[RMDB]
An RNA of 207 nucleotides, treated with 2A3 and DMS and read out base by base.
RNA sequence: GGGAACGACUCGAGUAGAGUCGAAAACACCGGGCGGACCGCUCAACACUUGGUCCGUGGGUGGUUAAACCCGAAUGGAAGGGUUUAAUGAGGUGUACCACUCUUUGUUCUCUGCGUCUGUACAUCCAAGGGCGCCCGUUCCAGAGGGUAGUAAGGGGUAGAUAUUUUCUUUCGAGAGAGUGUCUACAAAAGAAACAACAACAACAAC
Reactivity to 2A3 in 0.01 (KOAc 150mM, MgCl2 10mM, bicine 150mM(pH8.5), 24C), signal-to-noise 2, nucleotides 027 to 156: c020a000c000c000g000g250g020c000g000g000a000c000c000g040c090u130c080a080a080c060a050c100u140u280g000g000u000c000c010g010u010g010g010g000u020g000g000u020u070a040a050a010c000c000c000g020a040a040u040g010g040a010a000g000g000g000u000u040u100a040a040u050g020a020g000g010u010g000u020a010c020c000a030c020u020c000u020u030u090g060u080u030c040u000c000u030g030c000g040u000c020u050g010u040a010c000a030u000c010c000a010a010g050g010g000c030g010c000c000c000g120u040u000c000c000a000g020a010g010g020g000u010a010g020u020a060a060g020g020g000
Reactivity to DMS in 0.01 (KOAc 150mM, MgCl2 10mM, bicine 150mM(pH8.5), 24C), signal-to-noise 4, nucleotides 027 to 156: c020a040c010c000g050g020g040c010g010g020a030c010c010g040c120u010c080a110a160c130a070c140u000u010g040g020u000c010c020g060u010g000g010g030u010g010g000u000u000a030a070a070c000c000c010g000a080a160u000g010g000a170a210g000g010g030u000u000u000a050a100u000g000a110g060g020u000g000u010a040c030c050a050c020u000c020u010u000u010g020u000u000c070u000c030u000g020c030g000u010c030u000g020u000a030c070a060u000c060c030a010a160g000g010g020c210g010c010c040c020g000u010u000c050c010a100g020a260g010g020g020u000a060g000u010a070a070g010g010g000
Overview
The 2A3 profile rests on 2,661 reads. 2A3 adducts were read by reverse transcription with SuperScript II with manganese. For DMS the reverse transcriptase was MarathonRT. In probing experiments dimethyl sulfate is read out at A N1 and C N3, which are open when not base-paired. For DMS, 10,766 sequencing reads were counted. The RNA was probed in 150 mM KOAc, 10 mM MgCl2 and 150 mM bicine (pH 8.5) at 24 C.